Structure probing data (2A3 and DMS) for a 177-nucleotide construct. For DMS, 11,122 sequencing reads were counted. It was measured as part of the RMDB library RFMREP. DMS adducts were read by reverse transcription with MarathonRT. The 2A3 profile rests on 5,490 reads. The RNA was probed in 150 mM KOAc, 10 mM MgCl2 and 150 mM bicine (pH 8.5) at 24 C.

RNA sequence: GGGAACGACUCGAGUAGAGUCGAAAAGAAGGACCAGAGUGAGGACAUAUGUGUGGGAGAAGAUUCUAGAAGCUCUUGAGAGAAUCCAGAUGAAAGUCAGCGAGGAGCUGUACUGCUGGAGCUGCAGCUAAUAGUAGAUGUUCGCAUCUACUAUUAGAAAAGAAACAACAACAACAAC
Reactivity to 2A3 in 0.01 (KOAc 150mM, MgCl2 10mM, bicine 150mM(pH8.5), 24C), signal-to-noise 4, nucleotides 027 to 126: g040a020a030g050g010a020c010c030a020g020a020g080u070g020a040g020g030a010c040a040u180a100u130g100u010g020u070g030g030g000a050g000a060a020g010a040u100u030c030u080a050g030a140a030g050c020u020c020u160u150g070a110g000a000g040a140a070u030c010c000a020g010a070u110g130a110a060a010g020u040c010a000g000c010g030a070g030g040a020g030c010u000g020u090a030c010u020g030c010u020g000g020a020g000c050u080g020c020a020g010
Reactivity to DMS in 0.01 (KOAc 150mM, MgCl2 10mM, bicine 150mM(pH8.5), 24C), signal-to-noise 8, nucleotides 027 to 126: g010a100a100g010g010a090c050c050a070g000a080g020u010g010a070g010g010a060c080a070u010a060u010g010u000g020u000g010g010g010a070g000a070a070g010a080u000u000c040u010a110g010a110a090g010c060u000c040u000u010g010a130g020a070g000a080a080u000c020c040a050g000a120u000g010a080a080a060g000u010c010a020g010c030g000a120g010g010a240g010c010u000g000u000a040c030u000g010c030u000g010g000a030g010c070u000g000c120a080g000